An RNA of 207 nucleotides, treated with DMS and 2A3 and read out base by base. The reactions ran in a buffer of 150 mM KOAc, 10 mM MgCl2 and 150 mM bicine (pH 8.5), at 24 C. It was measured as part of the RMDB library OK3TST. For DMS the reverse transcriptase was MarathonRT. For 2A3, 3,968 sequencing reads were counted.

[RMDB]
RNA sequence: GGGAACGACUCGAGUAGAGUCGAAAACUAUUGUGCAUGUGACAAUACCUAACCAACCAGUCCAAGUGCAAUCUGUUAUACAAUCUAGCCAUCAACCAUCAGUGAUACAGACAACUGGCCCAAAUGUUCAGACUAUUCAGGUAGCUACAGUAAAUGACCGAUAUAGGUGAUUCGUCACCUAUAUCGGAAAAGAAACAACAACAACAAC
Reactivity to DMS in 0.01 (KOAc 150mM, MgCl2 10mM, bicine 150mM(pH8.5), 24C), signal-to-noise 2, nucleotides 027 to 156: c060u000a070u000u000g020u000g030c080a150u020g010u000g010a090c030a090a120u000a030c070c030u010a130a150c070c080a070a080c100c040a110g020u010c020c020a000a070g040u010g000c010a070a060u000c040u000g010u000u010a090u000a060c060a070a070u010c040u000a110g010c020c020a080u010c050a050a090c020c040a050u000c010a050g010u000g000a140u000a100c020a050g000a070c050a110a070c050u000g030g000c040c000c020a040a090a060u000g010u000u000c050a050g000a100c050u010a130u000u000c050a080g030g010u000a040g030c040u010a020c040a080g020u010a030a050a100u000g010a220
Reactivity to 2A3 in 0.01 (KOAc 150mM, MgCl2 10mM, bicine 150mM(pH8.5), 24C), signal-to-noise 6, nucleotides 027 to 156: c030u050a040u060u090g010u040g010c070a080u080g090u140g070a010c020a070a060u060a130c010c040u090a090a090c020c070a030a030c000c020a010g030u000c020c010a120a050g020u010g020c010a010a050u010c050u060g060u150u090a130u030a160c060a060a060u030c030u100a030g010c010c010a040u060c030a030a050c010c010a030u020c030a010g030u000g020a030u020a110c020a010g080a020c020a040a030c090u030g030g000c000c000c020a060a120a050u070g020u050u050c020a010g010a090c040u030a070u120u100c030a010g040g000u030a010g000c020u030a050c020a030g040u080a040a090a120u100g060a040